This 177-nucleotide RNA was probed chemically with DMS and 2A3. Values are in units of 0.01, from 0 to 300, in steps of 10. High 2A3 reactivity points to a flexible backbone, as in loops and unpaired stretches. For DMS the reverse transcriptase was MarathonRT. Source: RMDB library OK2TRN, as collected in RNAgym.

[RMDB]
RNA sequence: GGGAACGACUCGAGUAGAGUCGAAAAUGCUGGUGGGACUGCAAAUUGGUGCAACCAAUAUGGAAAGCAGUAUGGAGAUUCCUUGGAAAAUUUGGAAUGGAACCACCAUUAGUGAGAUAGUGGGACCAGUAACCAUACGAUUCGUCGUAUGGUUACUAAAAGAAACAACAACAACAAC
Reactivity to DMS in 0.01 (KOAc 150mM, MgCl2 10mM, bicine 150mM(pH8.5), 24C), signal-to-noise 6, nucleotides 027 to 126: u000g020c060u010g010g030u000g010g010g010a060c020u000g010c030a050a120a040u010u000g000g010u010g020c270a120a150c010c010a010a030u010a120u020g010g010a130a130a160g010c000a020g000u010a090u010g010g010a180g000a090u000u000c020c010u000u000g000g000a120a060a060a140u000u000u010g000g010a050a030u010g010g000a120a160c030c020a080c010c020a020u000u010a040g010u020g020a120g010a070u010a050g010u000g000g010g010a150c080c060
Reactivity to 2A3 in 0.01 (KOAc 150mM, MgCl2 10mM, bicine 150mM(pH8.5), 24C), signal-to-noise 4, nucleotides 027 to 126: u100g000c000u020g000g000u020g000g000g050a030c000u020g010c010a040a080a130u040u020g080g030u150g150c070a090a060c000c000a010a020u150a110u140g170g030a190a100a010g000c000a010g040u050a100u100g060g000a110g010a080u010u040c020c000u020u060g080g080a130a200a120a160u150u110u070g010g020a030a030u040g000g030a010a040c020c000a000c020c000a000u030u040a040g040u030g040a090g020a090u070a060g060u110g010g050g030a030c050c020